[RMDB]
RNA sequence: GGGAACGACUCGAGUAGAGUCGAAAAGCUCGUCCGGCUUGGCCCGAGCGAACACUUGAGGAACGGUUAGUCCCCUCUUGUGGAUUAGGACGUUCUACGUCCGGUCUGGCCCGUAGUUCGUCCGAAAGGCAAGCAUGUCGUUCGCGACGUGCUUGCCAAAAGAAACAACAACAACAAC
Reactivity to DMS in 0.01 (KOAc 150mM, MgCl2 10mM, bicine 150mM(pH8.5), 24C), signal-to-noise 2, nucleotides 027 to 126: g030c000u000c110g040u020c080c100g000g040c010u010u000g010g000c000c010c000g030a110g000c150g000a080a080c010a000c010u000u010g030a030g000g000a140a050c020g000g040u030u050a100g000u010c120c010c000c020u000c030u010u000g000u010g000g020a170u040u030a090g050g010a010c000g000u010u020c010u000a000c000g000u000c010c030g010g010u040c150u050g000g010c210c180c020g020u000a000g010u000u000c000g000u000c000c010g000a010a080a060
Reactivity to 2A3 in 0.01 (KOAc 150mM, MgCl2 10mM, bicine 150mM(pH8.5), 24C), signal-to-noise 2, nucleotides 027 to 126: g000c000u000c000g070u000c010c080g030g020c110u050u040g070g000c000c010c020g060a050g070c010g020a040a000c000a000c010u000u040g000a000g010g010a020a150c040g100g060u040u050a020g110u210c060c030c000c000u000c000u040u000g000u000g030g000a010u040u070a050g000g000a000c000g000u000u000c000u010a020c010g070u000c030c010g020g180u200c200u160g150g020c000c030c000g000u000a020g010u020u030c010g000u020c000c000g010a020a000a000